Overview: Structure probing data (DMS and 2A3) for a 177-nucleotide construct. The 2A3 profile rests on 1,074 reads. For 2A3 the reverse transcriptase was SuperScript II with manganese.

RNA sequence: GGGAACGACUCGAGUAGAGUCGAAAACUAUACGCCAAUCCGCUCCGGUACGGAUAUUGCGUUUCUGUCCGGUGUCUUGUUGUACCUGAUCUCCAACAAUAAAAUUAACCGUGAAUAUGUCGAAGCAGGAUUUAUCGUAGUUCGCUACGAUAAAUCCAAAAGAAACAACAACAACAAC
Reactivity to DMS in 0.01 (KOAc 150mM, MgCl2 10mM, bicine 150mM(pH8.5), 24C), signal-to-noise 2, nucleotides 027 to 126: c040u010a140u000a120c040g000c040c190a070a040u000c020c010g010c080u010c040c070g000g010u000a170c020g000g010a040u000a040u000u000g000c060g010u020u000u000c090u010g000u000c050c010g000g010u010g000u030c070u010u000g010u000u000g020u000a100c080c030u010g040a070u010c010u000c030c030a050a060c130a050a070u000a050a070a070a060u010u010a100a060c040c010g000u010g020a070a050u020a150u020g010u000c080g020a040a100g030c120a120
Reactivity to 2A3 in 0.01 (KOAc 150mM, MgCl2 10mM, bicine 150mM(pH8.5), 24C), signal-to-noise 2, nucleotides 027 to 126: c000u000a030u020a220c020g000c020c020a000a030u020c010c000g020c090u020c020c060g050g040u170a050c020g000g070a000u020a180u040u080g040c040g000u030u050u000c000u050g100u000c050c020g060g000u050g000u000c020u050u090g080u050u040g070u000a040c000c000u010g010a050u010c020u000c070c000a000a020c040a050a060u160a150a120a020a040u090u100a040a030c020c010g040u060g150a140a040u160a070u070g130u090c050g000a060a010g020c060a080